[RMDB]
RNA sequence: GGGAACGACUCGAGUAGAGUCGAAAACAAGAAAAUGUUUCGCGUGAUGAUGUUGAUUUGGGUAUUGGGGAUGAUUGCGCAUUAGUAACUGUACCUGAGGGCUAUCAAGUAGCGAUAACCACAGAUAUAUAAGCAAAACCUUCGGGUUUUGCUUAUAAAAAGAAACAACAACAACAAC
Reactivity to DMS in 0.01 (KOAc 150mM, MgCl2 10mM, bicine 150mM(pH8.5), 24C), signal-to-noise 3, nucleotides 027 to 126: c080a200a090g000a070a060a110a070u010g000u000u020u000c060g000c060g010u020g000a070u010g000a040u000g010u020u030g020a160u000u000u020g010g000g010u000a070u020u030g040g030g000g010a130u010g000a030u000u000g020c030g000c060a090u000u050a130g030u000a080a130c050u000g000u030a040c040c030u000g010a050g000g000g000c140u000a030u000c050a040a120g000u010a140g000c120g000a020u020a020a090c020c050a040c120a040g020a080u000a070
Reactivity to 2A3 in 0.01 (KOAc 150mM, MgCl2 10mM, bicine 150mM(pH8.5), 24C), signal-to-noise 3, nucleotides 027 to 126: c010a000a040g120a090a190a010a070u120g010u010u030u050c000g010c030g030u080g000a040u020g000a030u030g040u140u090g060a250u070u020u040g020g010g010u030a090u050u100g040g000g010g060a060u030g030a040u070u120g050c090g010c140a030u100u010a020g020u060a020a130c040u060g000u040a020c030c020u010g030a050g010g040g000c030u040a060u040c020a060a060g010u040a060g090c040g000a030u070a060a050c030c020a040c000a070g070a020u120a000